[RMDB]
RNA sequence: GGGAACGACUCGAGUAGAGUCGAAAACACUUGAUUUUCUCAAUGUCUCUAUUCCAUGUCCAAAUCUGGAAGCCCAGCGGCGCCCAGCACGAACCUUGCGGUGGUCACCCACUCGCACGGGUAGCCUAUUUCUCGUACGAUUCGUCGUACGAGAAAUAAAAGAAACAACAACAACAAC
Reactivity to 2A3 in 0.01 (KOAc 150mM, MgCl2 10mM, bicine 150mM(pH8.5), 24C), signal-to-noise 2, nucleotides 027 to 126: c080a030c050u060u100g030a070u100u040u070u050c060u010c030a040a110u150g020u030c020u000c000u060a090u080u000c010c010a030u060g050u000c010c040a050a060a130u040c030u010g040g010a060a020g030c010c000c020a030g030c050g050g000c000g010c000c000c000a010g030c020a010c090g050a080a060c000c000u010u040g000c010g000g000u010g030g040u190c040a110c020c010c000a000c020u160c040g000c010a010c010g000g000g010u020a020g020c010c010u010
Reactivity to DMS in 0.01 (KOAc 150mM, MgCl2 10mM, bicine 150mM(pH8.5), 24C), signal-to-noise 2, nucleotides 027 to 126: c110a090c230u040u010g010a040u000u020u030u010c050u000c000a040a090u000g010u000c020u010c010u000a140u000u000c050c060a070u000g030u060c050c060a090a100a090u000c070u000g000g000a030a180g010c060c040c010a140g000c000g000g010c010g040c040c000c000a080g020c140a070c070g020a040a130c050c010u000u020g000c000g000g030u010g000g000u080c230a180c300c030c000a000c020u010c050g000c040a010c090g000g000g010u000a020g000c040c050u010

Conditions: 150 mM KOAc, 10 mM MgCl2 and 150 mM bicine (pH 8.5), 24 C. Structure probing data (2A3 and DMS) for a 177-nucleotide construct. 2A3 adducts were read by reverse transcription with SuperScript II with manganese. For DMS the reverse transcriptase was MarathonRT.